Description:
An RNA of 207 nucleotides, treated with 2A3 and DMS and read out base by base. Conditions: 150 mM KOAc, 10 mM MgCl2 and 150 mM bicine (pH 8.5), 24 C. Source: RMDB library M2RFPK, as collected in RNAgym.
RNA sequence: GGGAACGACUCGAGUAGAGUCGAAAAGCAGUAGCUCGUUAGGCGAGGCUCCUAUACAAACACAGGUUGCUGAUCUGACGACGUCGAGAGACGCCCAAGAUUAGGACAGGAUAUAUCGAACCAAGGUGAACCUGUCCAGGGUUCGCCCUGGACAGAAACAGAUGAUUCGAUUCGUCGAAUCAUCUGUAAAAGAAACAACAACAACAAC
Reactivity to 2A3 in 0.01 (KOAc 150mM, MgCl2 10mM, bicine 150mM(pH8.5), 24C), signal-to-noise 4, nucleotides 027 to 156: g030c050a030g050u130a020g030c020u020c050g110u100u150a090g000g080c040g020a020g010g050c040u040c020c000u160a140u090a170c140a030a160a000c070a030c010a080g030g040u050u100g090c010u010g010a040u010c020u060g020a020c030g010a020c000g010u010c010g010a020g010a010g000a080c000g000c030c000c000a020a000g040a030u040u050a010g000g060a020c030a030g000g130a030u070a020u030a040u260c050g050a030a040c030c040a060a030g090g010u080g020a060a050c000c000u000g000u000c010c000a000g050g000g000u040u060c210g080c020c000c010u000g000g000a000c000a000g000a000a020
Reactivity to DMS in 0.01 (KOAc 150mM, MgCl2 10mM, bicine 150mM(pH8.5), 24C), signal-to-noise 2, nucleotides 027 to 156: g000c060a090g010u000a070g020c000u000c050g040u000u010a090g000g020c040g010a140g040g030c070u020c000c010u000a130u010a120c070a080a110a110c070a060c110a050g030g020u010u010g030c030u000g030a060u000c000u000g010a130c030g010a010c020g010u000c000g010a300g010a300g000a020c010g010c010c020c110a230a070g010a080u000u000a060g010g000a080c040a070g020g020a140u000a070u000a040u000c030g010a060a130c030c030a080a080g010g020u010g000a060a110c070c000u000g010u010c010c040a080g000g010g020u000u000c300g000c000c000c000u000g000g020a000c000a010g000a070a080
For 2A3, 2,574 sequencing reads were counted. DMS adducts were read by reverse transcription with MarathonRT.